[RMDB]
RNA sequence: GGGAACGACUCGAGUAGAGUCGAAAAAACACGUGGGUACGGCCCAGUGGGGGGGAGAGGGACACGCGCUGGGCUCUGCCCAGGGUGCAGCCGGACUGACUGAGCCCCUGUGCCGCCCCCAGAUAAAUCACUAAUGGAUAUUCGUAUCCAUUAGUGAAAAAGAAACAACAACAACAAC
Reactivity to 2A3 in 0.01 (KOAc 150mM, MgCl2 10mM, bicine 150mM(pH8.5), 24C), signal-to-noise 4, nucleotides 027 to 126: a000a040c090a030c060g120u100g020g020g010u060a030c080g040g010c010c010c010a010g070u130g020g030g010g030g000g000g010a100g020a030g080g000g030a020c030a010c080g030c020g000c000u000g000g000g010c020u020c030u140g000c010c000c010a000g020g030g010u040g000c010a020g020c030c030g040g040a060c040u080g030a050c010u040g030a040g070c000c000c010c000u010g050u070g020c010c010g110c000c030c000c000c000a010g010a160u190a030a120a040
Reactivity to DMS in 0.01 (KOAc 150mM, MgCl2 10mM, bicine 150mM(pH8.5), 24C), signal-to-noise 5, nucleotides 027 to 126: a080a060c050a070c110g020u000g000g000g010u000a080c110g000g000c000c020c010a060g020u010g010g010g010g000g000g010g000a100g020a150g010g010g000a080c040a300c050g010c040g000c010u010g000g000g010c000u010c090u010g010c010c020c030a030g000g000g030u000g010c030a040g010c020c020g000g010a120c120u010g000a070c050u000g010a280g010c010c010c010c020u000g000u000g000c010c020g000c110c020c000c010c010a040g000a080u010a040a060a110
An RNA of 177 nucleotides, treated with 2A3 and DMS and read out base by base.
For DMS the reverse transcriptase was MarathonRT.
The RNA was probed in 150 mM KOAc, 10 mM MgCl2 and 150 mM bicine (pH 8.5) at 24 C.
For DMS, 6,657 sequencing reads were counted.